[RMDB]
RNA sequence: GGGAACGACUCGAGUAGAGUCGAAAAGGUGUCAAUAGACUAUUGCCGCAUAUUUAUGAAGGUAUAUCAUUCAUUUUUUUUUGUCAUCUCAUCUUCAUAUGUUACAUGAUAUUAUCCUUUAUCAUAAACGUAUAUGACCUUUCGAGGUCAUAUACGUAAAAGAAACAACAACAACAAC
Reactivity to DMS in 0.01 (KOAc 150mM, MgCl2 10mM, bicine 150mM(pH8.5), 24C), signal-to-noise 2, nucleotides 027 to 126: g000g010u030g010u000c020a050a100u030a110g000a100c130u020a100u040u020g000c040c000g010c030a080u050a060u020u000u030a050u010g000a020a040g000g030u030a030u010a020u000c030a030u010u010c020a000u100u000u000u000u030u000u000u000u000g000u000c120a030u050c070u020c000a020u040c020u000u000c040a020u030a080u010g000u000u010a050c180a020u000g010a030u010a010u030u010a060u030c020c040u020u010u000a010u020c060a020u000a040a050
Reactivity to 2A3 in 0.01 (KOAc 150mM, MgCl2 10mM, bicine 150mM(pH8.5), 24C), signal-to-noise 7, nucleotides 027 to 126: g060g000u060g010u020c020a030a040u050a080g120a090c050u070a080u090u090g030c040c020g030c080a070u080a150u150u180u060a100u070g040a040a010g010g000u040a030u010a020u040c030a030u130u050c090a120u050u070u030u010u000u000u050u110u080g120u100c070a160u000c060u020c050a160u030c070u160u070c030a070u100a050u230g050u020u110a090c040a050u020g030a020u000a030u100u120a100u110c010c010u040u070u080a030u070c040a030u080a070a190